[RMDB]
RNA sequence: GGGAACGACUCGAGUAGAGUCGAAAAGGCCGGCUCGGCCCGCCAAUCCCGCCGGUAAGCCAACCGUAUGCCUCGGUACCGGAGGUGAUUUCCGACACCGGCACCGGCUUUGCCUGCGCGCGUGCCGAGUGUCGUGGUCGUUCGCGACCACGACACUAAAAGAAACAACAACAACAAC
Reactivity to DMS in 0.01 (KOAc 150mM, MgCl2 10mM, bicine 150mM(pH8.5), 24C), signal-to-noise 3, nucleotides 027 to 126: g000g000c000c080g000g020c210u020c070g000g000c060c020c040g020c110c120a060a090u010c030c030c000g010c040c020g000g010u010a070a080g000c100c140a130a160c040c060g010u010a090u000g000c100c060u000c030g000g010u000a040c030c010g010g000a070g010g010u010g020a100u000u010u000c020c000g000a090c070a070c110c010g010g000c010a040c050c040g000g000c020u010u000u000g010c080c060u010g000c040g020c070g000c120g010u000g020c000c010g000
Reactivity to 2A3 in 0.01 (KOAc 150mM, MgCl2 10mM, bicine 150mM(pH8.5), 24C), signal-to-noise 2, nucleotides 027 to 126: g000g000c040c040g090g000c080u100c140g160g000c000c000c000g030c010c000a010a060u010c000c000c000g000c010c010g000g020u050a070a040g030c020c040a050a020c000c030g020u060a040u210g050c010c030u030c050g040g020u030a060c010c020g050g000a020g040g000u170g050a080u040u030u060c020c030g020a020c020a030c070c000g020g000c010a020c020c000g000g000c020u060u060u120g060c000c010u080g030c150g020c020g000c020g020u030g000c010c000g030
Source: RMDB library OK2TST, as collected in RNAgym. Structure probing data (DMS and 2A3) for a 177-nucleotide construct. The 2A3 profile rests on 2,584 reads. Reactivities are given for positions 27 through 126. DMS (dimethyl sulfate) methylates the pairing face of unpaired adenines and cytosines.